The record gives the reactivity of an RNA of 207 nucleotides to 2A3. The reactions ran in a buffer of 150 mM KOAc, 10 mM MgCl2 and 150 mM bicine (pH 8.5), at 24 C. Source: RMDB library OK3TST, as collected in RNAgym. For 2A3, 636 sequencing reads were counted.

[RMDB]
RNA sequence: GGGAACGACUCGAGUAGAGUCGAAAACUCAUUUGUCGACAUAGCUUCUCAACGUUAUGCUCAGGUAUGUUGAAAUUUAGUAAUUAGCGACCUUUCUAAGAGAUGUUUACUUAAUUGUAUUAAUACACACAUUUCUAGACUACUUCUUACAUUAUGACUCCUACGAGUCAUUCGUGACUCGUAGGAGAAAAGAAACAACAACAACAAC
Reactivity to 2A3 in 0.01 (KOAc 150mM, MgCl2 10mM, bicine 150mM(pH8.5), 24C), signal-to-noise 2, nucleotides 027 to 156: c050u040c020a120u130u080u200g110u050c050g000a070c010a040u060a030g000c010u100u070c060u030c160a110a130c050g050u080u060a010u060g010c030u040c100a060g000g100u050a090u100g020u000u030g150a090a080a130u130u130u070a050g020u010a080a120u030u020a010g010c020g070a140c020c000u100u060u120c010u150a220a020g000a010g000a020u000g000u020u020u020a170c020u030u120a080a100u140u090g010u040a030u140u100a120a030u250a040c050a000c000a000c000a160u030u040u040c000u000a000g010a090c000u040a060c010u090u060c050u060u160a000c040a130u120u170a050u300g030a030